RNA sequence: GGGAACGACUCGAGUAGAGUCGAAAAACAUUAAGUUUCGACUUAAUGUAAACCCGAUGUAGCGGCACAUACGGAGCUUCAUACAUCUAAGAGUGCAAAUAAAAAGUUGAUCCUUCGGGAUCAACAAUGUGUACACCGAAUUCGUUCGGUGUACACAAAAAGAAACAACAACAACAAC
Reactivity to 2A3 in 0.01 (KOAc 150mM, MgCl2 10mM, bicine 150mM(pH8.5), 24C), signal-to-noise 1, nucleotides 027 to 126: a000c000a010u000u000a000a010g030u040u110u200c190g080a000c000u010u010a000a000u000g000u010a000a080a000c000c000c000g010a000u020g000u000a000g010c020g030g050c030a010c030a100u220a150c130g110g080a040g000c010u060u060c070a050u010a050c020a030u000c030u090a110a090g100a060g150u190g030c050a010a070a150u220a100a240a040a090a090g000u000u000g000a010u000c010c010u040u050c290g100g010g000a010u000c000a000a010c000a000a000
Reactivity to DMS in 0.01 (KOAc 150mM, MgCl2 10mM, bicine 150mM(pH8.5), 24C), signal-to-noise 2, nucleotides 027 to 126: a020c000a010u000u010a000a010g010u000u010u000c210g010a030c010u000u000a000a000u010g000u000a030a140a050c000c010c000g010a010u010g010u040a060g040c300g020g010c020a030c070a120u040a210c110g000g000a030g020c000u000u000c130a140u000a050c020a000u000c040u000a100a070g020a080g030u000g010c190a010a110a100u020a090a100a090a090a080g020u000u000g000a010u000c000c000u000u030c250g050g020g010a000u000c010a000a000c000a030a010
Annotation: Source: RMDB library M2PK50, as collected in RNAgym. Chemical mapping of a 177-nucleotide RNA with 2A3 and DMS. Reactivities are given for positions 27 through 126. 2A3 adducts were read by reverse transcription with SuperScript II with manganese. The RNA was probed in 150 mM KOAc, 10 mM MgCl2 and 150 mM bicine (pH 8.5) at 24 C.